An RNA of 177 nucleotides, treated with DMS and read out base by base. DMS adducts were read by reverse transcription with MarathonRT. Source: RMDB library M2PK50, as collected in RNAgym. Values are in units of 0.01, from 0 to 300, in steps of 10. The RNA was probed in 150 mM KOAc, 10 mM MgCl2 and 150 mM bicine (pH 8.5) at 24 C.
[RMDB]
RNA sequence: GGGAACGACUCGAGUAGAGUCGAAAAGUACAAUGUUUCGACAUUGUACGAUGGAGCCAAAGCCGAAAGGCAUUUUAAUCCUUGGCUGGCGAAAGCCUAUAAGAAGAAUCCAUUUCGAUGGAUUCAAUUCUCUUUUUGCUUUCGAGCAAAAAGAGAAAAAAGAAACAACAACAACAAC
Reactivity to DMS in 0.01 (KOAc 150mM, MgCl2 10mM, bicine 150mM(pH8.5), 24C), signal-to-noise 1, nucleotides 027 to 126: g020u000a010c000a030a000u000g000u000u010u000c130g040a030c000a000u000u000g000u000a000c000g000a180u010g010g000a120g010c000c020a000a120a030g050c000c000g010a090a090a090g000g020c150a140u010u000u010u000a130a150u000c020c040u010u010g010g010c020u000g010g010c000g000a130a050a100g000c010c010u000a080u000a040a070g030a100a070g000a000a000u010c000c000a010u000u000u010c030g000a010u000g010g000a030u000u000c000a080a060